[RMDB]
RNA sequence: GGGAACGACUCGAGUAGAGUCGAAAAUCAAGAUUGCUCCUGUGAGACGCAAGAGGUUGACAAUCAUGCUUGGGAGGAGGGUAACUGUUGAGGAGAUCGAGGAGGGUUAUACCACCUGCAUUGGUUGAGGCAGUGAUCAAUUCGUUGAUCACUGCCUAAAAGAAACAACAACAACAAC
Reactivity to DMS in 0.01 (KOAc 150mM, MgCl2 10mM, bicine 150mM(pH8.5), 24C), signal-to-noise 1, nucleotides 027 to 126: u000c080a050a050g010a130u000u000g000c030u000c020c030u010g020u020g010a190g030a060c130g010c070a070a030g020a050g010g020u000u020g000a190c060a040a050u000c040a070u010g010c040u000u010g020g010g000a050g030g000a120g020g000g000u000a050a040c090u000g000u000u020g010a040g000g010a090g000a040u000c050g000a070g000g000a080g000g010g000u000u000a090u030a130c130c030a060c040c020u010g030c160a070u000u000g000g000u010u000g000
Reactivity to 2A3 in 0.01 (KOAc 150mM, MgCl2 10mM, bicine 150mM(pH8.5), 24C), signal-to-noise 1, nucleotides 027 to 126: u100c010a050a070g070a050u040u080g000c050u020c010c050u130g040u000g030a090g040a030c050g020c110a070a060g030a050g130g020u130u130g070a070c030a010a030u050c010a050u130g050c030u110u010g070g000g000a130g010g030a130g000g000g000u010a000a080c070u110g120u180u160g000a050g040g090a110g010a020u020c060g010a010g050g000a070g020g000g000u080u030a090u050a110c010c000a030c010c020u060g000c090a010u000u110g110g000u010u050g000
About this RNA
Conditions: 150 mM KOAc, 10 mM MgCl2 and 150 mM bicine (pH 8.5), 24 C. This 177-nucleotide RNA was probed chemically with DMS and 2A3. The DMS profile rests on 1,127 reads. It was measured as part of the RMDB library OK2TRN. For 2A3, 736 sequencing reads were counted.